[RMDB]
RNA sequence: GGGAACGACUCGAGUAGAGUCGAAAAACAAAUGCGAGAGAGUCUCACCAGUCAAGGCGCGGCAUGGCAGUCGGUGAGAGCGGAGAGCUGCCUGCUUCUGAGGGCUCAUAAACGGAGAGCUUUCGAGGGUCGCCCAUUUAUUCGUAAAUGGGCGACCAAAAGAAACAACAACAACAAC
Reactivity to 2A3 in 0.01 (KOAc 150mM, MgCl2 10mM, bicine 150mM(pH8.5), 24C), signal-to-noise 1, nucleotides 027 to 126: a020c070a050a090a090u270g020c090g030a030g000a000g010a000g270u160c010u010c030a000c000c040a000g070u090c070a070a000g070g050c000g070c120g100g160c010a060u050g050g000c040a030g020u120c090g090g030u020g000a100g000a000g030c000g160g020a040g010a020g090c000u000g010c000c000u000g000c000u070u000c000u030g100a070g000g030g000c020u000c030a040u140a050a090a020c060g120g000a040g000a000g010c040u010u010u030c040g050a040g000